About this RNA
Chemical mapping of a 207-nucleotide RNA with 2A3. 2A3 adducts were read by reverse transcription with SuperScript II with manganese. The reactions ran in a buffer of 150 mM KOAc, 10 mM MgCl2 and 150 mM bicine (pH 8.5), at 24 C.
RNA sequence: GGGAACGACUCGAGUAGAGUCGAAAACGCCGGUCUGGACGUCAACGCGUUCUAUCCGGACGCGACCGACGCCGAGGGCCGCCGCGAGGCCCUCGCGAUCUGCGGUCUGUGCCCGGUCCGCGAGGAGUGCCUCGCCGAGGUCAUGGCCGAGGAGGGCGCAGCUGUAAGAUUUCGAUCUUACAGCUGCAAAAGAAACAACAACAACAAC
Reactivity to 2A3 in 0.01 (KOAc 150mM, MgCl2 10mM, bicine 150mM(pH8.5), 24C), signal-to-noise 1, nucleotides 027 to 156: c030g020c010c000g020g020u080c120u130g000g050a140c010g010u030c040a100a060c040g020c010g020u010u000c050u110a170u080c040c070g010g030a020c010g020c010g020a080c070c080g000a000c000g000c000c000g020a220g000g000g050c020c010g050c060c070g000c020g000a000g010g000c000c010c000u000c000g030c000g000a030u020c020u080g060c170g110g050u010c260u250g300u300g030c020c010c000g010g000u080c070c070g000c010g010a000g020g010a030g060u250g010c010c000u000c000g030c010c000g070a010g010g000u000c020a070u180g010g000c000c000g030a070g070g080a070g040g040g050c110